[RMDB]
RNA sequence: GGGAACGACUCGAGUAGAGUCGAAAAGAUAUGGACCCAGUUUGCAACAGCCAACGGCGUCGGAAACGACGUUUGGACAUGCAAAGUGGGUCCUAAGUCAAAAGCAGGACUGUUCGCAGUCCUGCAAUCUUUUUAUGUACUUCGGUACAUAAAAAGAAAAAGAAACAACAACAACAAC
Reactivity to DMS in 0.01 (KOAc 150mM, MgCl2 10mM, bicine 150mM(pH8.5), 24C), signal-to-noise 4, nucleotides 027 to 126: g020a020u000a120u010g000g000a020c000c000c000a020g000u000u010u000g000c000a100a100c230a160g010c000c000a020a100c300g010g010c020g010u000c010g030g000a030a030a050c000g020a010c000g010u000u000u000g000g010a030c050a260u010g010c000a000a020a020g000u000g000g000g010u000c000c000u000a000a040g000u010c010a100a090a090a120g010c000a020g000g000a010c000u000g010u010u030c230g010c000a010g010u000c000c020u000g000c000a010a010
Reactivity to 2A3 in 0.01 (KOAc 150mM, MgCl2 10mM, bicine 150mM(pH8.5), 24C), signal-to-noise 3, nucleotides 027 to 126: g010a010u010a020u080g000g010a000c030c000c000a060g120u000u000u000g220c300a300a130c070a230g010c010c010a080a030c150g160g000c030g030u010c020g000g010a000a020a010c010g000a000c000g000u000u010u010g000g010a050c100a230u300g000c010a010a000a030g300u000g000g020g010u010c000c000u000a000a000g000u000c010a020a010a000a080g000c000a010g000g010a010c010u020g060u150u210c300g020c210a010g000u000c000c010u000g000c010a000a000